Chemical mapping of a 207-nucleotide RNA with 2A3 and DMS.
The 2A3 profile rests on 3,157 reads.
Conditions: 150 mM KOAc, 10 mM MgCl2 and 150 mM bicine (pH 8.5), 24 C.
High DMS reactivity at an A or C suggests that its Watson-Crick edge is free.
[RMDB]
RNA sequence: GGGAACGACUCGAGUAGAGUCGAAAAGCGGAUUAUUCGUAAUCCGCAAAAAAGGCCCAUUAGCCCAGUUGGUUAAGGCGUGGUGCUAAUAACGCCGAAGUCAGCAGUUCGAUCCUGCUAUGGGCCACCAAAAAAUGGUUUGAUUCGUCAAACCAAAGAAUCAUGUAAGUUUCGACUUACAUGAUUCAAAAGAAACAACAACAACAAC
Reactivity to 2A3 in 0.01 (KOAc 150mM, MgCl2 10mM, bicine 150mM(pH8.5), 24C), signal-to-noise 3, nucleotides 027 to 156: g010c000g000g010a000u010u000a020u050u030c010g010u000a010a000u010c010c000g000c010a030a000a000a020a000a030g030g010c020c000c010a020u080u130a010g020c010c020c050a060g060u120u100g070g030u090u050a080a030g000g000c020g010u020g020g080u160g090c080u070a150a130u090a170a020c000g000c000c010g000a070a000g030u030c010a000g000c020a010g010u100u120c040g030a050u090c010c010u010g000c000u000a010u000g000g000g030c000c000a010c010c000a020a090a030a020a000a010u040g010g000u000u000u010g010a020u020u040c140g040u020c090a000a000a000c000c000a000a060a000
Reactivity to DMS in 0.01 (KOAc 150mM, MgCl2 10mM, bicine 150mM(pH8.5), 24C), signal-to-noise 2, nucleotides 027 to 156: g030c000g000g020a060u000u000a010u010u000c240g030u000a030a040u010c000c010g000c000a020a000a030a100a060a050g000g020c000c020c020a090u010u000a040g010c000c060c030a280g010u000u000g030g000u000u020a050a170g000g010c010g070u000g020g020u010g000c110u010a110a120u000a080a040c000g030c000c010g000a110a240g000u000c040a050g010c010a060g030u010u010c080g020a260u000c130c020u000g010c000u000a060u000g000g030g000c000c000a040c020c020a010a000a060a060a110a120u010g010g020u000u000u000g010a060u000u000c300g010u010c000a010a030a010c000c000a020a040a150